[RMDB]
RNA sequence: GGGAACGACUCGAGUAGAGUCGAAAAACAAGCUGCACGUGCGUGCGAGCAGUUUUCGAAAUCGCACGUUUCACGUAAAGACGCAACUCUACACGAGAAAGCGAGUCACGCAGACAGCGUCAAGGAACAACAAUGGCACUUUCGAGUGCCAUUGUUGAAAAGAAACAACAACAACAAC
Reactivity to 2A3 in 0.01 (KOAc 150mM, MgCl2 10mM, bicine 150mM(pH8.5), 24C), signal-to-noise 1, nucleotides 027 to 126: a000c040a050a000g010c040u010g000c030a010c010g030u040g020c020g010u000g000c010g000a030g020c060a030g010u020u000u190u120c030g030a040a040a090u030c010g000c040a000c010g010u020u080u140c040a020c010g020u060a070a080a010g060a000c010g000c040a000a040c000u000c000u050a050c040a030c080g040a030g020a130a000a010g040c010g010a040g090u090c030a010c120g000c010a010g050a150c060a040g030c020g030u020c030a020a040g130g010a090a100
Reactivity to DMS in 0.01 (KOAc 150mM, MgCl2 10mM, bicine 150mM(pH8.5), 24C), signal-to-noise 3, nucleotides 027 to 126: a050c150a070a090g020c010u000g010c280a040c050g010u000g010c090g000u010g000c020g010a020g010c130a080g000u000u000u000u000c100g060a050a090a070u000c000g020c040a040c000g000u000u010u030c010a070c070g000u010a060a150a090g030a100c070g010c060a100a110c000u000c010u000a020c090a100c030g000a050g010a060a030a100g030c060g000a130g020u000c030a030c070g000c050a120g000a070c110a150g010c000g040u000c040a120a100g010g020a120a110